The data come from the RNA Mapping Database (RMDB), library OK1LIB. Structure probing data (DMS and 2A3) for a 177-nucleotide construct. DMS adducts were read by reverse transcription with MarathonRT. 2A3 adducts were read by reverse transcription with SuperScript II with manganese. The 2A3 profile rests on 40,587 reads.
[RMDB]
RNA sequence: GGGAACGACUCGAGUAGAGUCGAAAAGCGGUGAUGCAGAGGUGUGAGGCUGAGAAGUCUCACUUGGAGACAUCGUCGAAUUAAAGCUGGUUUAAGUACACCUCUGAUCUUAGACUAGCAGAAGAUAGUAAGAGUUUGUAUUCGUACAAGCUCUUACAAAAGAAACAACAACAACAAC
Reactivity to DMS in 0.01 (KOAc 150mM, MgCl2 10mM, bicine 150mM(pH8.5), 24C), signal-to-noise 9, nucleotides 027 to 126: g000c010g000g000u000g010a010u000g000c010a010g000a010g000g010u000g010u000g000a010g000g000c000u000g000a220g000a170a010g010u000c010u000c000a010c000u030u040g010g010a210g010a080c000a000u000c000g000u000c030g000a120a100u040u020a080a110a120g000c000u000g010g000u000u000u000a010a010g000u000a110c050a040c010c010u000c000u000g010a060u010c000u000u000a010g000a010c000u000a010g000c000a200g010a090a090g010a100u030a110
Reactivity to 2A3 in 0.01 (KOAc 150mM, MgCl2 10mM, bicine 150mM(pH8.5), 24C), signal-to-noise 9, nucleotides 027 to 126: g060c010g000g010u010g000a010u010g010c000a000g000a000g000g000u010g000u000g000a000g000g000c000u000g010a010g010a060a000g010u000c000u000c000a000c000u010u050g050g030a070g010a000c000a000u000c000g000u010c010g030a020a020u120u110a150a050a010g000c000u000g000g000u000u000u000a000a000g000u000a000c010a020c000c000u000c000u000g000a000u000c000u000u000a000g000a000c000u010a000g000c010a000g040a070a020g060a040u220a050